[RMDB]
Structure probing data (2A3) for a 207-nucleotide construct.
It was measured as part of the RMDB library ARCHII.
The RNA was probed in 150 mM KOAc, 10 mM MgCl2 and 150 mM bicine (pH 8.5) at 24 C.

RNA sequence: GGGAACGACUCGAGUAGAGUCGAAAAUCAGCCUGGGAGUUCCUCCGGCCCAGGAUCUGGCGUCGACAGGAGGAUCACCGUCCCACCCGGUCGCGGGGUAGGUCGGGAAAUCUAACAGCGACUGAGCCUGCGCCGGCUUGCCUGCGGGACCGGCGGGGGUAUAAAUACACUUCGGUGUAUUUAUACCAAAAGAAACAACAACAACAAC
Reactivity to 2A3 in 0.01 (KOAc 150mM, MgCl2 10mM, bicine 150mM(pH8.5), 24C), signal-to-noise 3, nucleotides 027 to 156: u090c000a000g000c000c000u010g010g000g000a030g020u080u020c000c000u000c000c000g000g010c000c000c000a000g000g030a030u100c030u040g040g060c080g130u170c100g150a140c180a230g000g000a000g000g000a000u020c120a010c020c030g090u030c000c000c010a030c020c010c000g010g010u040c050g020c000g170g000g000g000u000a010g010g010u000c010g010g000g060a030a060a040u130c090u110a090a050c010a020g010c010g020a020c050u050g070a030g060c000c080u110g040c040g040c010c010g010g000c000u030u080g030c010c000u120g140c090g060g010g010a010c000c000g000g000c060g010g000g000